[RMDB]
Structure probing data (DMS and 2A3) for a 177-nucleotide construct. The 2A3 profile rests on 32,750 reads. Values cover nucleotides 27 to 126. For 2A3 the reverse transcriptase was SuperScript II with manganese. The reactions ran in a buffer of 150 mM KOAc, 10 mM MgCl2 and 150 mM bicine (pH 8.5), at 24 C.
RNA sequence: GGGAACGACUCGAGUAGAGUCGAAAAGGAAAAGCCGACGCUGGAGGCAGGCGUCACCUAUGCCCGGUCGCUUCGCGACAGGGUGGAGGCGGUAGGGCGGCCUCGCAACAGCCUGAAGAUUUUGCCCCAUUAUGAUUACCUUCGGGUAAUCAUAAUGAAAAGAAACAACAACAACAAC
Reactivity to DMS in 0.01 (KOAc 150mM, MgCl2 10mM, bicine 150mM(pH8.5), 24C), signal-to-noise 9, nucleotides 027 to 126: g000g010a050a050a070a080g020c050c030g000a240c300g010c010u000g000g010a070g010g010c010a070g010g010c000g000u010c020a100c010c010u000a070u010g010c000c000c010g000g010u000c000g010c010u040u030c230g010c010g010a010c010a020g000g000g010u000g000g000a030g000g000c260g000g020u020a070g010g000g000c000g000g010c010c010u000c050g010c090a080a270c070a050g000c010c040u020g000a130a100g000a100u000u010u000u010g000c010c010c010
Reactivity to 2A3 in 0.01 (KOAc 150mM, MgCl2 10mM, bicine 150mM(pH8.5), 24C), signal-to-noise 9, nucleotides 027 to 126: g090g020a030a080a010a020g110c050c020g020a030c030g020c010u020g030g040a050g150g000c010a010g020g020c000g020u020c010a050c010c010u030a040u130g000c000c000c000g000g000u010c010g000c090u300u210c240g000c010g020a010c020a020g020g010g010u050g040g020a040g010g030c090g040g080u160a110g050g060g000c010g020g140c000c000u050c070g030c020a030a110c010a030g010c000c030u070g040a090a050g060a170u080u100u100u150g050c000c000c000